[RMDB]
RNA sequence: GGGAACGACUCGAGUAGAGUCGAAAACGCCCAGAGCGGCAGCGCGCAGACAGACGGACCGACGGACUCCGCCGCGUCCACCUGUCUGCCCGGCCCGGCACUGCGCGCACGGGCACGGCCGAGCGCGGCUUCUCAUGAAGUUCGCUUCAUGAGAAGCAAAAGAAACAACAACAACAAC
Reactivity to DMS in 0.01 (KOAc 150mM, MgCl2 10mM, bicine 150mM(pH8.5), 24C), signal-to-noise 2, nucleotides 027 to 126: c300g010c000c000c010a130g000a130g020c050g000g020c040a200g010c050g000c110g000c020a000g000a020c020a030g000a110c050g000g000a020c010c000g020a050c020g020g000a180c190u010c000c000g020c000c000g020c160g030u000c010c000a090c010c010u000g010u000c010u000g000c000c010c030g010g020c030c000c030g020g020c100a080c110u010g000c090g020c030g000c040a050c050g000g000g020c020a130c090g000g000c000c050g000a050g000c040g020c050g010
Reactivity to 2A3 in 0.01 (KOAc 150mM, MgCl2 10mM, bicine 150mM(pH8.5), 24C), signal-to-noise 1, nucleotides 027 to 126: c070g060c010c010c030a030g030a030g060c100g040g000c050a050g080c010g000c000g000c020a000g000a020c010a000g010a000c030g000g020a000c010c020g030a030c030g010g140a210c110u050c090c010g000c010c010g020c050g000u000c000c000a030c030c000u000g000u000c000u000g000c000c000c000g070g000c000c000c000g020g020c040a050c130u230g030c140g000c000g010c100a070c080g000g060g010c130a060c050g010g000c050c020g060a040g000c000g000c000g060

This 177-nucleotide RNA was probed chemically with DMS and 2A3. For 2A3, 2,307 sequencing reads were counted. As a SHAPE reagent, 2A3 marks flexible, mostly unpaired nucleotides at the ribose 2'-OH. For DMS, 1,571 sequencing reads were counted. The reactions ran in a buffer of 150 mM KOAc, 10 mM MgCl2 and 150 mM bicine (pH 8.5), at 24 C.